[RMDB]
RNA sequence: GGGAACGACUCGAGUAGAGUCGAAAACAAUGAGGAAUGAACCUCUUCACUUGGUGCACCUGCCAGGAAGAUGCAGGGUCUGACAGCCUUUUCACUCCAAGAGCAACAAACUGCAGUUUUUUCGUUUGUGAAUAGUUAUUAACGUGGGCAGCAGUCAGAAUAUAUUUGUCGCUGAUGAUGGAUCCUCCAGCCAGCCAUUUGGCUGUCUCCAAACCGUCACCAUAUCCUAACAACGCCUAAAAUGUGACAGGACUUAUUAUUUUAAUACCUUACACUUCGGUGUAAGGAAAAGAAACAACAACAACAAC
Reactivity to DMS in 0.01 (KOAc 150mM, MgCl2 10mM, bicine 150mM(pH8.5), 24C), signal-to-noise 1, nucleotides 027 to 266: c060a050a090u040g020a070g000g030a040a150u020g000a120a150c040c030u000c000u000u000c060a070c050u020u010g000g000u030g000c000a160c060c040u000g000c010c040a090g000g020a010a030g000a030u000g000c150a020g010g000g040u010c010u020g030a080c140a150g020c020c000u000u000u000u040c080a090c070u000c160c060a060a130g000a070g030c040a100a090c120a020a150a030c060u010g030c100a120g030u000u040u010u020u030u020c030g010u010u000u000g010u010g000a040a100u000a060g010u010u000a070u020u020a030a080c060g040u010g000g010g000c030a080g060c070a080g010u010c070a110g000a070a040u000a010u000a070u000u000u000g030u010c130g000c030u010g000a050u020g000a070u010g000g000a020u000c070c000u000c030c170a020g000c040c000a010g000c040c040a140u010u010u020g010g010c010u000g000u010c030u010c100c070a130a050a070c090c070g010u010c000a040c040c030a000u010a090u020c110c000u000a120a030c090a110a080c070g050c010c020u010a020a060a130a110u010g030u000g000a010c060a060g000g030a070c070u030u000a080u020u000a160u010u000u050u020a070a070u000a060
Reactivity to 2A3 in 0.01 (KOAc 150mM, MgCl2 10mM, bicine 150mM(pH8.5), 24C), signal-to-noise 1, nucleotides 027 to 266: c050a020a160u120g000a050g050g090a150a070u150g040a130a130c000c040u020c000u030u050c060a100c050u040u030g000g000u050g060c000a110c020c030u090g000c020c000a020g060g030a050a030g000a000u080g010c080a060g000g030g000u020c030u000g090a010c010a010g000c000c010u050u110u110u100c050a060c030u020c020c010a070a010g070a040g110c010a010a060c020a060a080a020c050u080g090c100a160g100u020u030u000u040u300u300c080g040u040u070u040g080u010g020a110a130u050a100g070u040u120a080u110u160a130a030c070g000u040g000g000g010c020a050g000c020a000g040u050c040a010g070a140a000u080a020u010a050u100u230u180g110u100c000g000c080u060g020a080u030g020a010u010g040g000a000u020c000c060u020c070c000a030g030c000c000a000g000c030c010a100u080u060u120g020g000c020u010g010u000c020u000c010c000a070a080a080c020c010g000u020c010a010c010c000a070u100a050u210c030c000u000a040a020c100a150a100c130g090c040c020u170a160a100a130a110u040g030u040g040a010c000a080g010g030a020c020u060u100a040u170u050a120u040u300u040u060a110a010u080a110
The record gives the reactivity of an RNA of 307 nucleotides to DMS and 2A3. In probing experiments dimethyl sulfate is read out at A N1 and C N3, which are open when not base-paired. For 2A3 the reverse transcriptase was SuperScript II with manganese. The RNA was probed in 150 mM KOAc, 10 mM MgCl2 and 150 mM bicine (pH 8.5) at 24 C. The 2A3 profile rests on 1,931 reads.